[RMDB]
RNA sequence: GGGAACGACUCGAGUAGAGUCGAAAAUCCGGAGCUCCCUCUCGAGUUCCUCCGCCCUUUUUCUUCCAGACACCCACUGCUCGAGGACGUCCUCCCUUCCCCCUCGAGCCUUCUUCGAGUCGGACCGCUAGGACUUAGUUCGCUAAGUCCAAAAGAAACAACAACAACAAC
Reactivity to DMS in 0.01 (KOAc 150mM, MgCl2 10mM, bicine 150mM(pH8.5), 24C), signal-to-noise 8, nucleotides 027 to 129: u030c020c010g020g010a000g040c030u000c020c030c060u000c030u010c080g000a050g040u030u020c060c030u010c030c050g000c050c020c050u010u020u000u020u020c050u030u020c050c050a080g020a080c130a130c040c040c020a110c060u040g000c030u010c040g000a040g000g040a130c130g020u000c000c060u050c020c010c030u000u000c000c010c010c010c020u020c000g030a080g000c040c070u020u020c020u040u000c000g040a000g020u000c000g010g000a160c000c000g050c140u030a120
Reactivity to 2A3 in 0.01 (KOAc 150mM, MgCl2 10mM, bicine 150mM(pH8.5), 24C), signal-to-noise 9, nucleotides 027 to 129: u040c010c010g010g000a010g010c010u030c020c010c000u050c020u030c050g040a030g020u040u030c000c010u020c020c020g040c010c010c010u030u030u010u020u020c040u060u020c030c020a030g020a070c030a060c030c020c010a070c050u050g010c000u010c000g000a020g020g060a130c030g060u060c010c010u040c010c000c000u020u050c010c010c000c010c000u010c010g030a050g020c010c000u040u030c010u040u040c020g000a000g000u000c000g000g010a020c000c000g030c090u100a090
The record gives the reactivity of an RNA of 170 nucleotides to DMS and 2A3. The 2A3 profile rests on 121,094 reads.